[RMDB]
RNA sequence: GGGAACGACUCGAGUAGAGUCGAAAAGAAAUUAUUUCAACUGUACACUUAUAGCCUACGUACUGUAUUCACUUAGGACGUAUUCUAUACUAACGUGGAUUACAAAUCGACGUUCAAGUGAAAGAAAGGCUUUACUAAACUUCGGUUUAGUAAAGCCAAAAGAAACAACAACAACAAC
Reactivity to DMS in 0.01 (KOAc 150mM, MgCl2 10mM, bicine 150mM(pH8.5), 24C), signal-to-noise 1, nucleotides 027 to 126: g000a130a000a020u050u030a080u030u000u010c020a100a230c010u020g080u000a190c150a030c050u000u000a060u000a060g000c040c170u010a040c030g000u000a010c000u000g020u010a070u000u030c120a000c090u030u000a060g090g000a020c020g000u000a000u000u020c020u000a010u000a200c190u000a050a030c050g050u000g000g010a030u000u080a020c270a070a030a030u000c070g080a010c040g000u000u020c300a060a000g000u000g000a110a010a080g000a070a000a100
Reactivity to 2A3 in 0.01 (KOAc 150mM, MgCl2 10mM, bicine 150mM(pH8.5), 24C), signal-to-noise 3, nucleotides 027 to 126: g050a000a080a020u150u090a140u060u110u100c040a090a080c020u050g060u130a010c000a000c040u130u020a040u040a150g080c000c020u000a010c010g020u000a030c000u020g030u090a130u040u050c020a010c040u040u070a010g000g050a000c000g010u010a040u070u050c050u040a070u020a140c020u070a070a070c090g070u080g070g010a050u110u110a070c050a030a160a040u060c050g030a020c000g010u000u020c010a030a030g000u010g010a040a000a010g110a040a020a000
Structure probing data (DMS and 2A3) for a 177-nucleotide construct. DMS adducts were read by reverse transcription with MarathonRT. The RNA was probed in 150 mM KOAc, 10 mM MgCl2 and 150 mM bicine (pH 8.5) at 24 C. The DMS profile rests on 1,369 reads.